[RMDB]
RNA sequence: GGGAACGACUCGAGUAGAGUCGAAAAAUCCAUUGGAUUGUGUUAUAUGAUGUGGAUUAAUAGAAACAGUUGUGGGUAUUCAUAUUUCAUAGUGAGAGGUAAAAUUCUUGGAUCUAUGGAAGAUGAAGUAAGAUUAUUACUUCGGUAAUAAUCUUACAAAAGAAACAACAACAACAAC
Reactivity to DMS in 0.01 (KOAc 150mM, MgCl2 10mM, bicine 150mM(pH8.5), 24C), signal-to-noise 4, nucleotides 027 to 126: a060u010c000c000a160u020u010g000g000a070u000u000g010u000g010u010u020a070u020a020u020g010a110u000g010u000g000g020a080u010u000a060a090u010a070g000a130a090a050c090a080g010u010u000g020u000g010g000g030u000a120u000u000c010a000u000a050u000u010u000c000a000u000a010g020u000g000a300g000a030g000g010u010a080a080a090a180u010u000c000u000u000g000g000a170u000c000u000a010u010g000g000a010a010g000a020u000g010a020a030
Reactivity to 2A3 in 0.01 (KOAc 150mM, MgCl2 10mM, bicine 150mM(pH8.5), 24C), signal-to-noise 3, nucleotides 027 to 126: a000u050c010c000a020u050u030g110g020a020u090u080g060u020g110u300u140a220u010a060u240g050a020u070g020u000g030g020a020u000u080a100a120u130a130g080a030a070a020c050a020g010u010u010g010u050g030g120g040u080a060u010u040c000a010u020a040u010u000u000c000a000u010a000g020u020g010a050g010a000g010g030u130a090a170a140a150u120u000c000u000u020g090g000a020u000c000u010a010u020g000g000a010a020g000a020u010g000a050a020
The record gives the reactivity of an RNA of 177 nucleotides to DMS and 2A3. The RNA was probed in 150 mM KOAc, 10 mM MgCl2 and 150 mM bicine (pH 8.5) at 24 C. The data come from the RNA Mapping Database (RMDB), library RFMREP. Reactivities are given for positions 27 through 126. For 2A3, 1,906 sequencing reads were counted.